[RMDB]
The record gives the reactivity of an RNA of 177 nucleotides to 2A3 and DMS. DMS adducts were read by reverse transcription with MarathonRT. For DMS, 1,183 sequencing reads were counted. The data come from the RNA Mapping Database (RMDB), library OK2TRN. Values cover nucleotides 27 to 126.
RNA sequence: GGGAACGACUCGAGUAGAGUCGAAAAGAGUCCAUGCAGACAAGCUGGAACCUACAAGGACAGAUUGAAACCUGUAUCAGUUCCUGUCGCCUCUGGCAGGGUGCCCAGGGUAGCCUGCUCUGGCCAGAUGACGACAAACUUUCGAGUUUGUCGUCAUAAAAGAAACAACAACAACAAC
Reactivity to 2A3 in 0.01 (KOAc 150mM, MgCl2 10mM, bicine 150mM(pH8.5), 24C), signal-to-noise 1, nucleotides 027 to 126: g060a000g000u000c020c000a040u170g000c000a010g040a190c040a080a060g040c020u010g020g040a030a040c010c000u040a080c040a070a080g050g050a020c020a040g210a100u110u190g080a170a080a030c040c000u000g050u030a060u140c070a050g010u040u080c000c010u050g050u050c050g040c040c010u040c020u040g040g010c000a050g000g000g050u080g030c040c000c020a040g000g120g000u050a040g070c010c000u020g020c010u030c030u040g030g010c010c020a080g030
Reactivity to DMS in 0.01 (KOAc 150mM, MgCl2 10mM, bicine 150mM(pH8.5), 24C), signal-to-noise 2, nucleotides 027 to 126: g010a120g020u010c000c030a020u030g060c060a050g010a130c130a130a090g000c000u000g000g000a050a040c010c030u000a080c100a040a090g000g010a040c040a060g000a100u010u000g010a070a110a110c190c010u000g000u010a080u010c130a090g010u000u000c010c030u000g030u000c110g030c060c070u000c070u010g020g020c010a040g010g000g010u000g010c110c050c100a060g030g020g030u000a060g010c030c040u000g000c030u000c050u000g000g030c030c130a080g000